[RMDB]
RNA sequence: GGGAACGACUCGAGUAGAGUCGAAAAAGGCUAAAGAGUGGACGAUUUUCGGGGAAGGUCUCCCAAGAAGAACCAGGAACACCCCAAGAAGAGGAGACUUCCCCAAGGGUAGGUGGAACGCCAGGGAGAGCUUCGACCUUCGGGUCGAAGAAAAGAAACAACAACAACAAC
Reactivity to DMS in 0.01 (KOAc 150mM, MgCl2 10mM, bicine 150mM(pH8.5), 24C), signal-to-noise 4, nucleotides 027 to 129: a000g050g060c080u040a060a060a100g020a090g050u030g020g020a060c130g000a060u040u030u090u030c150g000g000g000g000a050a050g000g000u060c030u000c020c000c040a060a110g040a080a100g080a100a110c080c080a140g010g040a040a060c160a170c040c010c030c020a150a120g040a200a150g020a160g000g030a000g000a090c020u020u000c000c000c000c110a030a060g000g020g010u020a010g060g030u040g020g020a000a100c000g040c110c020a090g000g010g000a080g020a060g020
Reactivity to 2A3 in 0.01 (KOAc 150mM, MgCl2 10mM, bicine 150mM(pH8.5), 24C), signal-to-noise 1, nucleotides 027 to 129: a070g020g010c010u040a000a000a000g060a010g010u040g010g000a010c000g040a080u040u110u100u050c060g000g000g000g000a020a020g070g020u010c030u000c000c040c000a000a000g060a040a000g020a040a040c050c060a040g020g040a000a020c030a070c030c000c020c000a040a030g030a030a010g040a040g000g000a000g000a000c010u000u000c000c000c000c000a000a000g010g060g000u110a020g000g070u090g000g010a060a000c020g020c060c000a000g000g010g000a030g010a000g000